Structure probing data (2A3) for a 207-nucleotide construct.
The data come from the RNA Mapping Database (RMDB), library VIROID.
[RMDB]
RNA sequence: GGGAACGACUCGAGUAGAGUCGAAAAGCAAUGAGGUAAGGUGGGACUUUUCCUUCUGGAACCAAGCGGUUGGUUCCGAGGGGGGUGUGAUCCAGGUACCGCCGUAGAAACUGGAUUACGACGUCUACCCGGGAUUCAAACCCGUCCCCUCCAGAAGCAUUCGAAGGGAGUUCGCUCCCUUCGAAUGAAAAGAAACAACAACAACAAC
Reactivity to 2A3 in 0.01 (KOAc 150mM, MgCl2 10mM, bicine 150mM(pH8.5), 24C), signal-to-noise 1, nucleotides 027 to 156: g020c040a020a150u240g050a080g090g020u070a090a090g000g030u120g030g050g050a060c060u220u060u150u140c030c000u000u100c110u210g000g000a000a000c010c000a020a020g050c100g200g130u050u010g000g000u000u000c000c000g020a010g020g000g000g000g000g000u020g030u010g040a020u000c000c000a000g000g030u040a020c050c000g000c090c040g020u000a010g130a010a220a090c130u090g040g030a130u040u040a020c020g020a000c020g000u000c030u020a030c010c010c030g070g010g020a080u080u110c090a100a000a080c010c010c000g000u020c010c000c000c050u000c000c000a020g040a070a020g040